[RMDB]
RNA sequence: GGGAACGACUCGAGUAGAGUCGAAAAAAAAGCAGAUCGCUUGUGUGGUGAUCACACCUCGCCUAUAGAGUUUGAGUGAAACACACAUCAAAAAGUCAUAAUGACUCGAUUUUUUGGUGUCAUUAUAGUAAUAGGCUGAGUUCGCUCAGCCUAUUACAAAAGAAACAACAACAACAAC
Reactivity to 2A3 in 0.01 (KOAc 150mM, MgCl2 10mM, bicine 150mM(pH8.5), 24C), signal-to-noise 2, nucleotides 027 to 126: a000a000a000a030g100c120a100g010a270u070c040g010c090u110u050g000u020g000u000g100g000u060g070a090u060c010a030c020a030c000c000u020c000g000c030c060u230a200u170a130g020a040g000u080u110u170g180a110g030u050g050a010a060a000c020a000c010a000c020a000u010c050a060a000a000a000a000g090u060c020a030u020a160a050u130g090a050c030u000c090g040a080u050u060u020u120u040u110g120g010u040g010u040c010a030u050u120a070u010a070
Reactivity to DMS in 0.01 (KOAc 150mM, MgCl2 10mM, bicine 150mM(pH8.5), 24C), signal-to-noise 2, nucleotides 027 to 126: a040a050a020a060g020c120a050g000a030u030c060g020c030u000u000g000u000g020u010g000g020u010g010a080u010c010a100c040a070c160c040u000c040g010c100c060u030a170u010a080g050a080g000u010u000u000g020a090g010u000g020a130a070a040c040a050c110a020c010a020u000c040a010a000a020a070a030g030u000c080a060u030a100a110u010g000a060c210u000c120g000a020u000u000u010u000u000u000g000g020u000g000u000c070a030u000u000a040u000a140
This 177-nucleotide RNA was probed chemically with 2A3 and DMS. For DMS, 1,680 sequencing reads were counted. 2A3 adducts were read by reverse transcription with SuperScript II with manganese.